[RMDB]
RNA sequence: GGGAACGACUCGAGUAGAGUCGAAAAGCACCAGUUCGCUGGUGCAAAAAGCGUACUACAUGCGAGGUGUAGGGAGUCACCGUCCCAAAUAGGACGGUUGACUUUGAUCUACACUCCCCACCGCAUGUAUCGCAAAAAACGGUGAUUCGUCACCGAAGAUUAGAUUGUCUUUCGAGACAAUCUAAUCAAAAGAAACAACAACAACAAC
Reactivity to 2A3 in 0.01 (KOAc 150mM, MgCl2 10mM, bicine 150mM(pH8.5), 24C), signal-to-noise 4, nucleotides 027 to 156: g000c000a000c000c010a010g030u050u080c200g030c110u010g050g030u010g010c010a000a000a050a000a040g040c060g020u100a110c040u000a010c010a000u000g000c000g010a020g020g000u000g000u000a010g010g020g010a010g000u000c000a000c010c000g010u010c000c000c020a130a230a100u230a040g000g000a000c000g010g000u040u140g000a010c000u030u010u030g020a020u000c000u000a000c000a000c020u080c040c000c000c000a040c010c000g000c000a000u000g000u010a030u290c120g000c000a050a020a000a060a020a040c040g000g000u010g000a030u030u090c190g030u030c130a000c010c010g040a070a000
Reactivity to DMS in 0.01 (KOAc 150mM, MgCl2 10mM, bicine 150mM(pH8.5), 24C), signal-to-noise 3, nucleotides 027 to 156: g000c000a040c000c010a040g020u000u000c290g070c020u000g040g010u020g000c000a000a010a030a110a060g000c000g000u000a060c130u000a000c000a040u000g000c000g010a300g060g020u000g000u000a030g000g010g000a020g010u000c000a040c010c010g020u000c010c010c000a040a160a170u010a070g000g020a030c020g020g020u010u000g020a010c010u000u000u010g020a060u010c010u010a020c020a000c020u000c260c050c030c050a300c100c010g000c010a010u000g000u000a010u000c000g000c010a000a060a040a080a070a020c010g000g030u000g000a050u020u020c300g010u010c010a020c010c010g020a040a080